[RMDB]
RNA sequence: GGGAACGACUCGAGUAGAGUCGAAAAGAUAUGGAGAUGAACUACCUCUUCUGCAGUCGUAGAGAUCGGAAACGAUGUAGACUGCAAUAGAGGCAUCUCCUAAGUCAAACAUGGCUUCGGCCAUGAAUCCCGUAAGUAUCUUCGGAUACUUACGGGAAAAAGAAACAACAACAACAAC
Reactivity to DMS in 0.01 (KOAc 150mM, MgCl2 10mM, bicine 150mM(pH8.5), 24C), signal-to-noise 3, nucleotides 027 to 126: g010a010u010a300u010g000g000a030g020a010u010g010a080a030c090u030a300c030c000u000c010u000u000c110u000g010c000a010g010u000c000g000u000a130g000a090g010a030u000c000g000g000a080a090a140c000g020a030u010g000u000a070g000a020c000u000g030c000a010a040u000a020g020a000g010g000c020a000u000c000u000c000c000u000a000a090g010u000c020a170a070a220c020a010u000g000g000c010u000u020c200g030g000c000c000a010u000g000a090a100
Reactivity to 2A3 in 0.01 (KOAc 150mM, MgCl2 10mM, bicine 150mM(pH8.5), 24C), signal-to-noise 2, nucleotides 027 to 126: g030a020u040a040u100g000g000a030g010a010u010g010a070a100c080u140a100c200c000u010c020u120u040c030u100g000c000a000g000u000c040g100u300a050g050a030g020a240u010c010g000g030a050a020a030c010g000a000u010g040u100a020g000a020c000u010g010c000a010a000u040a010g000a000g000g030c000a000u000c000u000c000c000u010a040a000g020u000c000a050a070a110c000a000u000g000g000c000u120u080c300g120g000c000c010a010u020g000a000a080
An RNA of 177 nucleotides, treated with DMS and 2A3 and read out base by base. Reactivities are given for positions 27 through 126. For 2A3, 3,724 sequencing reads were counted. The reactions ran in a buffer of 150 mM KOAc, 10 mM MgCl2 and 150 mM bicine (pH 8.5), at 24 C. It was measured as part of the RMDB library TTRDEL.